Background:
The record gives the reactivity of an RNA of 177 nucleotides to DMS and 2A3. The reactions ran in a buffer of 150 mM KOAc, 10 mM MgCl2 and 150 mM bicine (pH 8.5), at 24 C. It was measured as part of the RMDB library RFM100.
[RMDB]
RNA sequence: GGGAACGACUCGAGUAGAGUCGAAAAGAAUAACGAUACGCGCCGCACGGCUAAUGGCCGACCGCAAGAGACGAUUAACGUCAAUCUGCGCGCAUAAGCAGAAUUUGCGGAAUUUUACGUUUUGGAACAAGGCAGUCCAAUUCGUUGGACUGCCUUGAAAAGAAACAACAACAACAAC
Reactivity to DMS in 0.01 (KOAc 150mM, MgCl2 10mM, bicine 150mM(pH8.5), 24C), signal-to-noise 2, nucleotides 027 to 126: g000a170a160u000a090a100c000g000a130u000a090c000g000c060g070c000c040g030c030a300c100g010g040c000u000a150a040u030g040g000c000c050g000a050c070c000g130c000a000a050g000a080g000a150c000g000a300u010u080a190a190c000g000u010c000a060a050u000c000u000g020c000g000c300g000c300a040u010a110a130g040c000a070g000a070a250u000u050u050g000c050g020g000a060a030u050u020u070u000a190c110g000u000u000u000u020g000g000a300a080
Reactivity to 2A3 in 0.01 (KOAc 150mM, MgCl2 10mM, bicine 150mM(pH8.5), 24C), signal-to-noise 2, nucleotides 027 to 126: g110a000a050u210a020a070c030g040a040u080a060c030g000c020g000c090c000g010c000a020c040g060g000c010u040a090a040u150g080g020c010c000g000a000c000c030g000c010a000a000g080a010g000a030c000g070a050u150u110a180a130c050g020u000c000a070a060u000c000u000g050c030g000c080g000c020a010u080a270a050g020c020a000g010a010a140u020u020u070g000c000g070g000a020a080u050u130u110u130a130c100g000u080u000u000u000g030g010a040a030